[RMDB]
RNA sequence: GGGAACGACUCGAGUAGAGUCGAAAAAAUAGUACCUGAAACCUAGCGCUUACAAGCGGUCGGAGCCUACGGGUGACGGCGUGCCUUUUGCAUAAUGAGCCUACGAGUUGCUCCUCACUAGCAAGAUCCGAAUAAUCAUUUUCGAAUGAUUAUUCGGAAAAGAAACAACAACAACAAC
Reactivity to DMS in 0.01 (KOAc 150mM, MgCl2 10mM, bicine 150mM(pH8.5), 24C), signal-to-noise 3, nucleotides 027 to 126: a080a050u010a080g010u010a050c030c010u000g010a100a070a070c030c050u020a040g000c040g000c030u010u000a080c200a100a090g020c020g000g000u030c000g030g010a230g000c060c010u000a100c130g000g020g020u000g000a280c040g000g010c000g020u000g000c050c020u000u010u030u000g000c130a070u000a030a090u010g000a120g020c020c010u010a050c040g010a040g010u010u000g040c070u000c000c000u010c130a080c100u000a100g010c140a040a110g010a130u010
Reactivity to 2A3 in 0.01 (KOAc 150mM, MgCl2 10mM, bicine 150mM(pH8.5), 24C), signal-to-noise 9, nucleotides 027 to 126: a000a010u220a030g030u040a040c010c010u030g040a090a010a020c000c000u020a040g040c020g010c070u090u100a060c050a140a010g030c030g030g020u020c010g010g010a010g010c000c020u080a110c220g060g000g010u040g020a020c000g010g010c020g030u060g020c000c010u060u130u100u110g040c020a040u030a150a090u180g030a020g020c000c010u020a020c030g020a010g040u050u070g040c000u010c010c000u040c020a080c050u060a040g050c040a090a010g020a160u000